[RMDB]
RNA sequence: GGGAACGACUCGAGUAGAGUCGAAAAGAUAUGGAAUCAGUAGCGAGCUGGUAUCGGAAACGAUAUCAUCAGCGAUGAGCUACAGAUUCCUAAGUCAAAGCCACACUCAGGUUCGCCUGAGUGUGGCGGAACAACCUUAGUUCGCUAAGGUUGUUCCAAAAGAAACAACAACAACAAC
Reactivity to DMS in 0.01 (KOAc 150mM, MgCl2 10mM, bicine 150mM(pH8.5), 24C), signal-to-noise 7, nucleotides 027 to 126: g000a020u000a040u010g000g000a020a010u000c000a080g040u000a010g020c000g000a110g030c000u000g010g010u000a010u010c000g020g000a010a010a020c000g010a020u000a010u000c200a110u020c260a040g010c010g010a160u010g010a300g010c000u000a010c000a060g000a010u000u000c000c000u000a000a060g000u000c000a110a120a270g010c000c000a010c000a000c000u000c000a000g010g010u010u010c300g010c000c010u000g000a020g010u000g010u000g000g000c010
Reactivity to 2A3 in 0.01 (KOAc 150mM, MgCl2 10mM, bicine 150mM(pH8.5), 24C), signal-to-noise 6, nucleotides 027 to 126: g000a000u010a000u050g000g000a000a010u000c020a030g010u010a000g020c160g070a020g010c050u010g010g000u010a000u010c000g000g000a000a000a010c010g000a000u010a020u080c140a070u140c050a010g000c010g050a150u210g050a020g000c000u000a000c020a010g010a000u000u000c000c000u000a010a000g000u000c030a170a160a050g010c000c000a010c000a000c000u010c000a010g060g100u090u120c280g140c120c000u000g000a020g010u010g000u000g000g000c020
Record summary
Chemical mapping of a 177-nucleotide RNA with DMS and 2A3. The RNA was probed in 150 mM KOAc, 10 mM MgCl2 and 150 mM bicine (pH 8.5) at 24 C. For 2A3 the reverse transcriptase was SuperScript II with manganese.